[RMDB]
RNA sequence: GGGAACGACUCGAGUAGAGUCGAAAACUGCGAACCACUAGAGGGGUGCUAGACAUUGAUGCUACGUGGUCGCAUUUCAGUCAGGGCCGCCGUAAUUAGCUAUGUGCACUUCAGGUUGCUGGCAUUCGCAUCCUUCCCCUUUCGAGGGGAAGGAUGCAAAAGAAACAACAACAACAAC
Reactivity to 2A3 in 0.01 (KOAc 150mM, MgCl2 10mM, bicine 150mM(pH8.5), 24C), signal-to-noise 1, nucleotides 027 to 126: c020u040g000c000g040a060a030c030c000a000c010u030a000g030a000g070g050g020g020u020g010c040u060a010g050a130c040a010u030u110g150a180u270g050c000u010a020c160g030u030g020g000u000c000g000c000a000u020u010u140c050a010g000u000c070a000g030g000g000c000c000g000c000c020g040u030a080a300u030u100a030g000c050u030a030u260g100u080g010c000a050c100u040u030c080a050g060g070u010u080g030c030u030g030g000c000a100u120u150c010
Reactivity to DMS in 0.01 (KOAc 150mM, MgCl2 10mM, bicine 150mM(pH8.5), 24C), signal-to-noise 1, nucleotides 027 to 126: c160u050g070c010g050a010a010c000c020a050c000u000a020g000a000g000g000g020g000u000g030c030u010a020g020a290c110a020u000u000g050a140u140g000c000u000a010c280g000u000g000g000u000c000g020c040a040u000u010u000c200a110g000u000c120a080g000g050g030c000c000g050c000c060g000u000a000a150u080u020a020g010c150u000a140u000g020u020g000c010a110c070u000u000c040a100g020g000u000u000g000c000u020g000g000c080a110u070u000c120